[RMDB]
RNA sequence: GGGAACGACUCGAGUAGAGUCGAAAAGUAGCUGAGAGGAAGCCCUGAUCGUGCUUUCCUUAUAGUGCAUUAUAUCAGUGGGUUGUGGGUACAGCUCUCUCUUCCCAGGACCUUCCAUCUUCACAAGGAAUGUGUGUUCGUUCGCGAACACACAUUCAAAAGAAACAACAACAACAAC
Reactivity to DMS in 0.01 (KOAc 150mM, MgCl2 10mM, bicine 150mM(pH8.5), 24C), signal-to-noise 1, nucleotides 027 to 126: g000u020a050g000c020u000g010a160g010a060g040g000a110a040g010c010c040c000u020g000a050u000c180g030u000g000c000u000u000u000c190c070u000u020a100u000a120g040u010g010c040a060u000u000a060u010a060u000c040a080g030u000g010g000g020u010u000g010u020g010g000g000u010a180c040a000g020c010u000c040u000c080u020c100u000u000c020c000c010a120g020g010a090c070c020u000u000c060c040a070u000c040u000u010c080a120c250a060a130g010